The record gives the reactivity of an RNA of 177 nucleotides to DMS and 2A3. The reactions ran in a buffer of 150 mM KOAc, 10 mM MgCl2 and 150 mM bicine (pH 8.5), at 24 C. The DMS profile rests on 3,987 reads.

[RMDB]
RNA sequence: GGGAACGACUCGAGUAGAGUCGAAAAGAAAUAAGCAUGCGAGGGGAAGGGGAAAACGCUGUUUUCUUCUUUUGCAGCGGAAAACCCGAAAGACUAUGAAAUAGUCUGAAAAGCAUGCGAUAAGAAAGGGUUAUCUUUUGUUCGCAAAAGAUAACCCAAAAGAAACAACAACAACAAC
Reactivity to DMS in 0.01 (KOAc 150mM, MgCl2 10mM, bicine 150mM(pH8.5), 24C), signal-to-noise 3, nucleotides 027 to 126: g030a080a070a060u040a090a260g020c000a010u000g010c030g020a120g000g020g020g000a070a120g000g020g020g000a100a020a070a150c010g000c040u010g000u030u000u000u030c130u000u000c010u000u030u000u000g000c030a020g000c000g000g000a050a050a060a180c000c000c000g060a090a090a010g000a000c000u010a000u000g010a110a090a280u000a010g000u010c000u010g010a020a020a010a300g010c010a010u000g010c000g000a050u030a090a130g000a080a060a100
Reactivity to 2A3 in 0.01 (KOAc 150mM, MgCl2 10mM, bicine 150mM(pH8.5), 24C), signal-to-noise 1, nucleotides 027 to 126: g150a000a250a080u210a040a000g010c000a000u000g000c040g080a100g030g040g030g000a030a300g080g030g000g000a000a050a010a000c000g020c010u000g050u020u010u000u020c010u000u020c000u000u120u050u000g000c000a000g000c000g000g050a020a020a020a020c000c000c000g000a040a040a040g000a000c000u000a000u120g000a130a000a110u010a000g000u000c010u000g000a000a050a000a000g010c000a000u000g000c000g020a030u010a000a120g150a100a040a000